[RMDB]
RNA sequence: GGGAACGACUCGAGUAGAGUCGAAAAACGUGGAUAGAGGAUAUUAUUCUGUUGAGACCGUAUCUUACCUAGUUGCCAUGAAAGUCAGAUAUCCACAUAGAAUUACUAUACUUAGGGGCAAUCACGAGGGUAAAUAGUAGUUCGCUACUAUUUACCCAAAAGAAACAACAACAACAAC
Reactivity to DMS in 0.01 (KOAc 150mM, MgCl2 10mM, bicine 150mM(pH8.5), 24C), signal-to-noise 5, nucleotides 027 to 126: a100c100g020u000g010g000a060u000a060g000a110g000g010a040u000a050u000u010a120u000u000c010u000g010u000u010g010a160g010a080c140c150g000u000a080u010c060u000u000a110c050c030u000a090g010u010u000g010c040c020a050u010g010a060a080a120g010u000c080a060g000a160u000a020u000c020c010a050c070a110u010a050g010a140a090u000u000a100c050u000a050u010a060c060u010u010a100g010g000g000g000c080a040a080u010c080a060c120g000a220
Reactivity to 2A3 in 0.01 (KOAc 150mM, MgCl2 10mM, bicine 150mM(pH8.5), 24C), signal-to-noise 2, nucleotides 027 to 126: a000c030g020u030g000g000a000u020a140g060a030g060g000a030u030a060u230u050a060u120u000c050u060g200u160u190g110a070g030a050c030c010g010u050a040u060c000u000u080a030c000c000u030a080g120u010u040g010c020c010a040u080g080a080a050a020g020u030c050a000g010a100u040a030u020c020c010a010c020a030u060a030g030a040a050u160u060a100c030u040a030u050a130c030u030u060a010g000g080g000g000c000a000a040u090c050a050c100g070a100
The record gives the reactivity of an RNA of 177 nucleotides to DMS and 2A3. The DMS profile rests on 4,728 reads. It was measured as part of the RMDB library OK2TRN. Conditions: 150 mM KOAc, 10 mM MgCl2 and 150 mM bicine (pH 8.5), 24 C.